[RMDB]
RNA sequence: GGGAACGACUCGAGUAGAGUCGAAAAUUAUUGGGGGGUACACUCGAGGAGUGGAAGGCGCUGCCCGGGGGGAACCGGAUUUACCUACGGGAAUCCCUGGGUUCCUCUGAUGUCCAGUCCCUCUCCCGCACCUGCAGGUUCGCCUGCAGGAAAAGAAACAACAACAACAAC
Reactivity to 2A3 in 0.01 (KOAc 150mM, MgCl2 10mM, bicine 150mM(pH8.5), 24C), signal-to-noise 8, nucleotides 027 to 129: u300u200a120u170u100g000g000g000g000g000g000u060a020c010a010c030u050c030g070a050g000g020a020g050u110g010g090a060a030g100g000c050g010c130u090g010c000c020c000g000g000g000g000g000g000a010a010c000c000g020g010a030u120u070u160a110c010c000u040a050c030g010g000g010a020a040u040c000c000c000u000g020g000g000u000u010c010c000u000c020u070g060a070u130g050u050c040c010a010g050u030c000c010c000u010c020u000c000c000c000g030c030a050
Reactivity to DMS in 0.01 (KOAc 150mM, MgCl2 10mM, bicine 150mM(pH8.5), 24C), signal-to-noise 7, nucleotides 027 to 129: u070u060a100u040u030g040g000g020g010g030g030u010a090c080a000c050u020c050g000a100g030g010a030g050u030g000g010a000a000g030g000c240g010c090u000g000c040c010c000g060g060g020g000g000g020a190a140c020c010g000g000a080u050u030u070a110c120c090u030a080c050g010g000g030a060a150u000c000c000c060u000g040g010g020u000u000c000c000u050c000u020g010a110u050g020u050c050c050a070g030u000c030c050c000u000c040u020c050c010c000g050c130a130
The record gives the reactivity of an RNA of 170 nucleotides to 2A3 and DMS.
It was measured as part of the RMDB library 15KLIB.
The DMS profile rests on 30,711 reads.
Conditions: 150 mM KOAc, 10 mM MgCl2 and 150 mM bicine (pH 8.5), 24 C.
For 2A3 the reverse transcriptase was SuperScript II with manganese.